[RMDB]
RNA sequence: GGGAACGACUCGAGUAGAGUCGAAAAAGCAAUUUGAAUAAAGUGGAAAUGCCCUCUCCAUAGUUAACACUGCAGGGGUCCUUUCCAAUGCAGAAUGGCUUGGUUCUUAGGUUUAGGUAGUAGGGACCAUAAAGAGUUUGUUCGCAAACUCUUUAUGAAAAGAAACAACAACAACAAC
Reactivity to DMS in 0.01 (KOAc 150mM, MgCl2 10mM, bicine 150mM(pH8.5), 24C), signal-to-noise 9, nucleotides 027 to 126: a040g010c040a050a040u000u000u000g010a140a130u010a060a110a140g020u000g000g000a020a030a030u000g000c130c010c010u000c030u000c100c090a070u010a060g010u000u010a090a110c180a080c060u000g010c240a030g010g000g010g000u000c060c080u000u000u000c010c010a040a060u000g010c130a100g000a050a050u000g000g010c010u000u000g010g010u000u000c020u000u000a060g010g010u000u000u010a060g010g010u000a060g010u000a050g010g010g010a070c150
Reactivity to 2A3 in 0.01 (KOAc 150mM, MgCl2 10mM, bicine 150mM(pH8.5), 24C), signal-to-noise 3, nucleotides 027 to 126: a000g040c030a040a070u080u090u120g080a100a070u180a230a160a050g080u060g030g000a040a010a020u050g010c000c010c000u020c000u000c040c000a050u050a080g040u060u120a090a040c040a020c110u040g030c050a010g010g000g000g000u050c010c020u030u040u020c020c000a020a020u050g000c010a010g030a120a060u040g030g000c010u030u040g010g020u090u030c020u040u060a110g030g010u060u120u090a060g050g020u020a030g030u000a010g080g000g010a000c030